[RMDB]
RNA sequence: GGGAACGACUCGAGUAGAGUCGAAAAAUGCAGCACCAAAGGCAUUUCCAUUUGUUGAUGUGGCAUAAUUGUUCAUAAAUUUAGUGUUACUUACUUUAUUGCUGCUGGAACCAACAAUUGUAAUUCCUAGAGGGUCAGAUUUCGAUCUGACCCUCUAAAAAGAAACAACAACAACAAC
Reactivity to 2A3 in 0.01 (KOAc 150mM, MgCl2 10mM, bicine 150mM(pH8.5), 24C), signal-to-noise 2, nucleotides 027 to 126: a000u030g000c010a180g070c010a060c050c010a120a000a000g090g000c000a020u000u020u070c040c000a060u020u030u030g010u020u010g040a120u050g020u030g000g000c010a010u030a020a040u160u050g020u090u000c010a020u100a160a300a270u090u160u090a150g040u030g050u170u040a030c030u130u020a030c000u110u040u060a040u090u110g000c020u040g010c000u080g070g060a000a100c050c000a000a000c000a000a050u020u010g040u040a030a060u000u000c000c000
Reactivity to DMS in 0.01 (KOAc 150mM, MgCl2 10mM, bicine 150mM(pH8.5), 24C), signal-to-noise 2, nucleotides 027 to 126: a030u060g000c010a070g040c120a100c160c220a070a110a180g000g060c010a000u020u000u000c270c020a090u000u000u000g020u000u000g000a050u000g000u030g000g000c000a000u040a000a010u000u000g000u000u000c100a020u050a020a060a070u010u010u050a150g000u020g020u000u000a080c130u020u000a080c030u010u000u000a040u000u000g010c020u000g000c040u000g000g000a090a130c240c060a050a000c090a030a020u000u000g010u000a150a170u020u000c000c050
An RNA of 177 nucleotides, treated with 2A3 and DMS and read out base by base. The 2A3 profile rests on 728 reads. DMS adducts were read by reverse transcription with MarathonRT. Conditions: 150 mM KOAc, 10 mM MgCl2 and 150 mM bicine (pH 8.5), 24 C.